Chemical mapping of a 207-nucleotide RNA with 2A3. The 2A3 profile rests on 1,623 reads. Conditions: 150 mM KOAc, 10 mM MgCl2 and 150 mM bicine (pH 8.5), 24 C.
[RMDB]
RNA sequence: GGGAACGACUCGAGUAGAGUCGAAAACCCUGAUGCUUCGGCAUCAGGGAAAAAAGAUAUGGAUCUUUCCACGCAGGACUAUCUCGGAAACGAGCCGAGGUCCUGAACUACGUGGUAGGAUCCUAAGUCAAAAAACUACGCACUUCGGUGCGUAGAAGUUAUUUCGCACUUUCGAGUGCGAAAUAACAAAAGAAACAACAACAACAAC
Reactivity to 2A3 in 0.01 (KOAc 150mM, MgCl2 10mM, bicine 150mM(pH8.5), 24C), signal-to-noise 2, nucleotides 027 to 156: c000c000c010u000g010a000u020g000c060u010u090c300g120g020c000a010u000c000a000g000g000g000a050a000a000a030a030a080g060a030u080a060u120g000g000a000u000c000u020u000u000c000c000a000c000g010c000a000g020g000a000c040u150a210u290c000u010c000g020g030a130a300a190c070g090a160g080c040c030g050a080g020g000u000c000c000u000g000a030a010c070u120a020c060g000u000g000g010u010a010g000g020a000u000c010c000u000a100a000g010u000c070a140a000a000a000a050a000c000u020a000c000g010c010a000c010u060u070c280g140g010u000g000c020g000u000a000g000a000a000